[RMDB]
RNA sequence: GGGAACGACUCGAGUAGAGUCGAAAACAUGUCUAAUCAAAAGAAUAUGAUCAUUCUCUAUGACCCAGCAAUGUCAUUCCUAGUUUGGGUGCUGGAGAGAAACCCUUGUACAUAGGCACAUGGAGGUGGAUAUAUGAAUGUUCAGAGCUCAGAGUAGUGACAUUCCAUAUUUCGAUAUGGAAUGUCAAAAAGAAACAACAACAACAAC
Reactivity to 2A3 in 0.01 (KOAc 150mM, MgCl2 10mM, bicine 150mM(pH8.5), 24C), signal-to-noise 6, nucleotides 027 to 156: c030a030u050g030u010c040u120a110a090u140c100a060a100a080a060g080a090a070u110a100u100g070a060u090c030a050u070u030c020u000c010u030a090u200g040a040c000c000c010a010g000c030a030a110u080g060u130c030a080u070u090c020c010u070a080g070u120u150u090g020g010g010u050g040c020u020g000g010a040g000a000g010a060a030a010c000c010c000u000u060g040u060a040c030a060u080a030g020g000c040a030c010a060u060g060g010a030g040g020u020g010g030a010u020a000u010a020u140g080a100a020u050g020u040u050c030a020g010a010g020c010u020c050a010g000a020g050u030a020g050
Reactivity to DMS in 0.01 (KOAc 150mM, MgCl2 10mM, bicine 150mM(pH8.5), 24C), signal-to-noise 3, nucleotides 027 to 156: c000a050u000g010u000c030u000a060a090u010c050a060a090a100a130g000a050a070u000a050u000g020a110u010c080a140u010u000c010u000c030u000a070u000g000a070c000c010c010a060g040c010a060a060u000g020u000c060a120u010u000c010c000u000a110g020u000u000u010g020g000g020u000g010c020u000g020g010a080g000a080g000a100a090a080c040c020c030u000u010g040u010a050c040a100u000a090g000g010c050a040c060a090u000g030g010a080g030g030u000g000g000a070u000a110u000a080u010g010a060a080u010g000u000u000c010a090g010a110g040c040u000c010a050g020a100g030u000a120g040
An RNA of 207 nucleotides, treated with 2A3 and DMS and read out base by base.
Values are in units of 0.01, from 0 to 300, in steps of 10.
The RNA was probed in 150 mM KOAc, 10 mM MgCl2 and 150 mM bicine (pH 8.5) at 24 C.
Values cover nucleotides 27 to 156.
It was measured as part of the RMDB library OK3TST.